[RMDB]
RNA sequence: GGGAACGACUCGAGUAGAGUCGAAAACCAUAGAAGAAUCCCCGUUUUUUGAUAAAAACGGCAAUGAAAUAGAGUCUGACUAAAUUUUAUUGAUAUAGCAACGAUAAUAACCGGAAAUUUCUUCCAGAUCCAACGAGCAUUUCGAUGCUCGUUGGAUAAAAGAAACAACAACAACAAC
Reactivity to 2A3 in 0.01 (KOAc 150mM, MgCl2 10mM, bicine 150mM(pH8.5), 24C), signal-to-noise 2, nucleotides 027 to 126: c000c000a000u070a080g110a070a000g000a000a130u180c000c070c000c040g070u000u000u000u000u000u190g220a140u200a010a060a000a000a000c000g040g000c000a000a000u020g060a000a020a000u010a000g090a000g110u250c300u190g030a050c000u090a020a300a300u050u300u100u070a120u070u000g020a000u040a000u010a260g050c020a100a010c180g050a010u000a180a000u070a300a000c050c010g050g080a110a090a180u040u040u000c000u000u000c050c000a050g000
Notes
Structure probing data (2A3) for a 177-nucleotide construct. For 2A3 the reverse transcriptase was SuperScript II with manganese. The reactions ran in a buffer of 150 mM KOAc, 10 mM MgCl2 and 150 mM bicine (pH 8.5), at 24 C.